[RMDB]
RNA sequence: GGGAACGACUCGAGUAGAGUCGAAAAUGAGGCCCCUCUAACAAUAAUCCAAAACUACUUCGCAGAGUAAUCUGCCGAAUCGUAGGAUGCCCAUUACUAUCUAUUUUUGGAGCAUCUGGAACCCUCGUGUAAGAAACAAAUUCGUUUGUUUCUUACAAAAAGAAACAACAACAACAAC
Reactivity to DMS in 0.01 (KOAc 150mM, MgCl2 10mM, bicine 150mM(pH8.5), 24C), signal-to-noise 7, nucleotides 027 to 126: u010g010a070g000g010c060c010c020c080u010c110u020a080a090c100a090a070u010a090a080u010c010c010a030a060a110a120c010u000a010c020u000u000c020g000c010a010g010a010g010u030a110a110u000c010u000g000c060c040g010a000a010u030c170g010u010a020g000g010a020u000g000c000c010c010a020u000u000a050c240u020a090u020c160u020a100u010u000u000u000u010g000g000a140g010c000a000u000c010u000g000g000a040a140c110c000c000u000c050g010
Reactivity to 2A3 in 0.01 (KOAc 150mM, MgCl2 10mM, bicine 150mM(pH8.5), 24C), signal-to-noise 9, nucleotides 027 to 126: u120g010a040g030g020c010c010c000c000u060c080u120a110a090c060a070a090u170a060a050u030c010c020a010a030a040a070c000u010a010c000u010u010c000g000c000a000g000a020g040u140a110a190u010c000u010g040c050c070g020a010a020u080c050g000u000a010g000g010a000u010g010c000c000c010a020u050u030a060c080u080a090u220c060u090a280u130u090u000u010u020g040g000a150g010c000a000u000c010u020g020g030a060a080c010c010c000u030c020g020
The record gives the reactivity of an RNA of 177 nucleotides to DMS and 2A3. The reactions ran in a buffer of 150 mM KOAc, 10 mM MgCl2 and 150 mM bicine (pH 8.5), at 24 C. For 2A3 the reverse transcriptase was SuperScript II with manganese. Source: RMDB libraries RFM100 and RFMREP, as collected in RNAgym.